[RMDB]
RNA sequence: GGGAACGACUCGAGUAGAGUCGAAAAUUGAAAAUAAACUCUGGUUUGAUUUUGUUGAAAAUCCCAGUGUUAUUGGUGUUUAUCAUAAACUUGGAGAACGUGUACGCCAAGCUAUCUUAAACACUGUCGAGCCGCCAGUUCGCUGGCGGCAAAAGAAACAACAACAACAAC
Reactivity to DMS in 0.01 (KOAc 150mM, MgCl2 10mM, bicine 150mM(pH8.5), 24C), signal-to-noise 3, nucleotides 027 to 129: u070u100g000a050a060a030a050u080a040a080a070c020u010c040u000g010g010u090u060u000g000a030u080u000u000u000g050u020u060g060a000a000a040a090u010c000c000c000a040g000u000g000u000u070a030u040u040g000g000u010g000u020u020u020a000u040c090a060u050a010a090a060c000u000u030g000g000a070g000a170a290c280g060u020g020u030a090c090g000c000c080a140a000g000c080u010a000u020c120u000u090a000a000a000c060a020c010u030g060u010c110g040a090
Reactivity to 2A3 in 0.01 (KOAc 150mM, MgCl2 10mM, bicine 150mM(pH8.5), 24C), signal-to-noise 2, nucleotides 027 to 129: u120u190g040a020a000a030a020u210a060a040a040c000u000c000u020g040g050u120u250u030g020a040u000u010u000u000g300u130u280g000a030a000a000a000u000c000c000c000a000g000u020g040u020u060a100u000u190g000g000u000g000u040u030u000a000u010c060a020u000a000a050a080c020u030u030g010g000a110g040a140a070c100g040u060g080u300a030c040g060c010c000a000a000g010c000u010a000u000c050u000u000a000a000a000c010a020c000u000g060u130c020g170a040
The record gives the reactivity of an RNA of 170 nucleotides to DMS and 2A3. Reactivities are rounded to 0.1 and cut off at 0 and 3. For 2A3 the reverse transcriptase was SuperScript II with manganese. Conditions: 150 mM KOAc, 10 mM MgCl2 and 150 mM bicine (pH 8.5), 24 C. The data come from the RNA Mapping Database (RMDB), library 15KLIB.